[RMDB]
An RNA of 177 nucleotides, treated with 2A3 and DMS and read out base by base.
Reactivities are given for positions 27 through 126.
RNA sequence: GGGAACGACUCGAGUAGAGUCGAAAAAUGCCGAGCCGAUUGUGGUGAAGUGGAUGAUCCUAUGCUGUCGAGAAAAGCCUCUAGCGAGUUUCAUGGCGGCCCGUACCCUAAACCGACUCAGGUGGUCACACUAAGCUUAUUUCGAUAAGCUUAGUGUAAAAGAAACAACAACAACAAC
Reactivity to 2A3 in 0.01 (KOAc 150mM, MgCl2 10mM, bicine 150mM(pH8.5), 24C), signal-to-noise 8, nucleotides 027 to 126: a000u100g010c010c010g010a020g020c000c010g190a180u090u230g080u120g080g020u050g030a070a020g060u070g050g020a050u070g020a040u060c010c010u050a070u130g000c020u020g030u090c050g020a020g060a150a100a040a030g040c000c010u040c040u050a030g030c030g060a050g030u030u070u050c050a040u070g020g000c000g000g010c000c010c010g050u090a080c010c000c000u050a110a080a030c020c030g050a050c030u020c080a020g020g090u050g040g020u070c030
Reactivity to DMS in 0.01 (KOAc 150mM, MgCl2 10mM, bicine 150mM(pH8.5), 24C), signal-to-noise 9, nucleotides 027 to 126: a100u010g010c020c010g010a230g020c030c020g000a110u010u000g020u000g010g020u000g010a120a100g020u000g010g000a120u000g010a090u000c030c030u000a070u010g010c030u000g010u010c060g010a130g010a070a090a110a170g000c070c030u000c060u000a080g010c060g000a070g010u000u000u010c050a070u010g000g010c040g010g010c030c050c030g010u000a080c050c010c020u000a040a090a110c080c030g010a050c050u000c060a090g010g010u000g000g010u000c080
It was measured as part of the RMDB library OK2TRN.